[RMDB]
RNA sequence: GGGAACGACUCGAGUAGAGUCGAAAAAUCAGAAACGUCUGUAGCCUGUCCCGUUCGAGCGACUGUCGGAUUUUUCCGAGCGAGGAGAAACCUGUUCAGACAUUUCAGGAGGAACGGAACACCUGUAAUGAGGGACGUACUUCGGUACGUCCCUCAUAAAAGAAACAACAACAACAAC
Reactivity to 2A3 in 0.01 (KOAc 150mM, MgCl2 10mM, bicine 150mM(pH8.5), 24C), signal-to-noise 1, nucleotides 027 to 126: a000u120c000a010g160a000a160a110c140g210u000c040u000g150u040a030g010c100c000u000g000u010c020c000c000g000u210u120c000g000a030g040c020g000a010c020u000g000u020c010g090g060a170u000u000u000u000u300c000c030g010a000g110c210g000a040g000g000a000g120a050a000a000c000c000u060g020u110u160c000a000g060a060c020a130u120u050u100c000a040g040g080a080g040g090a040a000c040g000g120a050a050c020a070c000c010u140g020u070a000